[RMDB]
The data come from the RNA Mapping Database (RMDB), libraries RFM100 and RFMREP. The record gives the reactivity of an RNA of 177 nucleotides to DMS and 2A3. High DMS reactivity at an A or C suggests that its Watson-Crick edge is free. The RNA was probed in 150 mM KOAc, 10 mM MgCl2 and 150 mM bicine (pH 8.5) at 24 C. For 2A3 the reverse transcriptase was SuperScript II with manganese. As a SHAPE reagent, 2A3 marks flexible, mostly unpaired nucleotides at the ribose 2'-OH.

RNA sequence: GGGAACGACUCGAGUAGAGUCGAAAAGUUUGCACUCCAGAUGUAGCAAUUGAAAACGAAGAUAUUCCUGGAAAGUUUGCAACCGCGUGGGUGCUAGGCAGUGCACAGCGAUAUGCUGGGUAUGGACUAGUUUCAACCAUUUCGAUGGUUGAAACUAAAAAGAAACAACAACAACAAC
Reactivity to DMS in 0.01 (KOAc 150mM, MgCl2 10mM, bicine 150mM(pH8.5), 24C), signal-to-noise 4, nucleotides 027 to 126: g000u010u020u020g000c020a050c070u020c030c030a100g000a100u020g020u010a080g020c050a040a060u010u010g020a100a080a110a130c150g020a080a070g000a100u020a060u000u000c020c020u000g010g000a090a110a080g020u000u020u010g030c070a020a030c060c040g000c150g000u000g000g020g000u000g000c000u010a030g010g010c050a070g020u000g000c000a020c010a040g030c030g000a120u030a060u060g030c010u000g000g000g020u010a000u000g010g030a160c120
Reactivity to 2A3 in 0.01 (KOAc 150mM, MgCl2 10mM, bicine 150mM(pH8.5), 24C), signal-to-noise 4, nucleotides 027 to 126: g010u030u030u060g000c010a020c000u040c000c030a020g000a180u120g050u090a040g040c060a090a080u040u200g120a050a080a060a070c110g000a130a040g070a110u150a060u150u120c010c000u020g030g030a050a100a050g080u070u040u090g040c010a050a040c060c000g000c020g020u110g030g060g000u010g000c000u000a010g000g080c050a020g040u010g010c010a010c010a040g000c010g080a200u070a030u300g000c000u010g000g020g000u030a070u060g000g010a010c100